[RMDB]
RNA sequence: GGGAACGACUCGAGUAGAGUCGAAAAAGGAGGAAAGCAAAGAAAGCAACGGGGCUAGCGAGUGGAUGUUCCUCCCCCCGAAGGUCCCGAGUGAGGCUUAUCCCGGGGAUCGGCCUCUGUCCCUCCACGCCUGCAUAGUUCGCUAUGCAGAAAAGAAACAACAACAACAAC
Reactivity to DMS in 0.01 (KOAc 150mM, MgCl2 10mM, bicine 150mM(pH8.5), 24C), signal-to-noise 9, nucleotides 027 to 129: a060g000g000a050g000g000a040a050a080g020c130a060a090a080g010a050a090a090g020c040a130a130c090g030g030g010g020c050u000a060g010c020g010a020g020u050g010g000a090u050g000u020u030c030c020u020c020c010c010c000c000c010g000a050a050g020g000u010c020c000c030g020a120g030u000g000a060g010g010c010u010u010a040u030c080c000c080g010g000g020g020a030u010c050g000g000c010c000u020c060u030g000u030c010c000c000u010c000c000a020c060g020c120
Reactivity to 2A3 in 0.01 (KOAc 150mM, MgCl2 10mM, bicine 150mM(pH8.5), 24C), signal-to-noise 9, nucleotides 027 to 129: a010g040g010a010g010g030a100a050a010g040c070a090a060a110g120a080a130a010g060c010a050a060c030g010g000g020g000c020u040a030g090c010g050a020g020u080g040g050a070u140g100u070u030c010c010u030c000c000c000c000c000c000g030a060a040g030g010u010c000c000c000g010a020g030u120g010a010g010g010c020u040u030a030u070c030c040c060g060g040g060g000a020u030c050g010g010c000c010u020c030u010g030u020c000c000c000u000c000c000a020c040g050c010
Description:
Chemical mapping of a 170-nucleotide RNA with DMS and 2A3. The RNA was probed in 150 mM KOAc, 10 mM MgCl2 and 150 mM bicine (pH 8.5) at 24 C. It was measured as part of the RMDB library 15KLIB. Reactivities are rounded to 0.1 and cut off at 0 and 3.